Source information
The record gives the reactivity of an RNA of 177 nucleotides to 2A3. The reactions ran in a buffer of 150 mM KOAc, 10 mM MgCl2 and 150 mM bicine (pH 8.5), at 24 C.

[RMDB]
RNA sequence: GGGAACGACUCGAGUAGAGUCGAAAAAGCCAUAGCUCGUGGUUACGACCACGAGCUAUGGCAAUUAAGUAGUGGUGCCGCUCUUAUUAGGUUGAAAAGUAAUAAGAGUAGUUCACUACUUAUCAAACCCUAUGUGUGUGUUCGCACACACAUAGGGAAAAGAAACAACAACAACAAC
Reactivity to 2A3 in 0.01 (KOAc 150mM, MgCl2 10mM, bicine 150mM(pH8.5), 24C), signal-to-noise 2, nucleotides 027 to 126: a040g000c020c000a000u030a000g030c000u000c040g000u000g030g010u080u070a070c300g040a010c060c010a000c000g040a000g000c000u000a000u010g000g000c000a000a000u000u000a000a000g000u000a000g010u000g050g180u280g030c030c000g000c000u000c010u000u020a010u000u000a000g200g030u060u170g260a190a210a040a010g100u000a000a000u000a000a000g000a010g000u000a000g000u000u000c020a000c000u000a000c000u000u000a020u050c030a030a030a060